This 207-nucleotide RNA was probed chemically with 2A3. For 2A3 the reverse transcriptase was SuperScript II with manganese. The RNA was probed in 150 mM KOAc, 10 mM MgCl2 and 150 mM bicine (pH 8.5) at 24 C.

[RMDB]
RNA sequence: GGGAACGACUCGAGUAGAGUCGAAAAUGACCAACCAGUGCUUACUUAUGCUGGUAUAGGUAUAUGUAGUGAUGGUAGCAUAACCAAUAGUACGGCUAGGAGAGCUGCAGCAGACCCUGUUAGUCCUGUUAUAUCUGGUAAUAUUUCUGUACCUACCGGAGAGUUUCUGAUUCGUCAGAAACUCUCCAAAAGAAACAACAACAACAAC
Reactivity to 2A3 in 0.01 (KOAc 150mM, MgCl2 10mM, bicine 150mM(pH8.5), 24C), signal-to-noise 1, nucleotides 027 to 156: u120g070a000c020c000a020a000c020c000a050g000u030g080c020u140u190a100c010u150u050a040u270g000c000u010g040g050u030a040u020a010g060g020u050a030u020a010u230g050u030a040g070u030g090a040u030g020g000u000a010g010c010a040u300a130a050c000c040a010a060u030a010g040u080a000c020g000g000c080u080a030g060g060a080g010a030g020c040u050g020c030a020g000c010a000g020a120c020c000c000u040g120u090u080a020g100u070c030c110u120g000u180u060a110u000a050u220c060u020g020g000u040a070a130u020a140u080u130u000c000u040g100u110a020c110c010u230a000c010c010